[RMDB]
RNA sequence: GGGAACGACUCGAGUAGAGUCGAAAAUGCCGCUGGACGUGUCUCAGGCUCUCAUGGAUGUGAUGAGCGAGCAGCUGCAGGGUUUGUUACAUGCAGUUCACCAGCAGGAGGUGCUUGAGAGGAACUACGUAGUUUUAGCGUUCGCGCUAAAACUACGAAAAGAAACAACAACAACAAC
Reactivity to 2A3 in 0.01 (KOAc 150mM, MgCl2 10mM, bicine 150mM(pH8.5), 24C), signal-to-noise 1, nucleotides 027 to 126: u110g050c040c020g040c090u110g010g060a090c050g130u030g130u040c000u000c000a010g110g000c040u000c000u000c020a120u120g040g100a130u180g120u040g080a270u090g000a020g010c040g000a050g000c050a000g000c010u020g000c010a020g190g100g020u200u260u140g100u170u130a080c040a030u040g000c000a010g000u000u010c020a030c060c000a010g000c000a000g000g020a040g000g080u080g000c010u050u000g040a060g000a010g060g050a070a030c020u050a020
Reactivity to DMS in 0.01 (KOAc 150mM, MgCl2 10mM, bicine 150mM(pH8.5), 24C), signal-to-noise 3, nucleotides 027 to 126: u010g020c020c050g030c090u000g000g000a110c110g030u010g010u000c010u000c020a070g010g000c010u000c010u000c020a060u010g020g040a100u010g020u010g020a090u010g000a050g030c080g020a070g020c100a060g010c030u000g010c020a030g010g040g040u010u010u020g010u000u010a070c040a090u000g010c020a060g010u000u000c040a060c010c040a090g020c020a060g040g000a030g000g010u000g000c040u000u000g010a040g000a090g020g010a040a080c080u010a180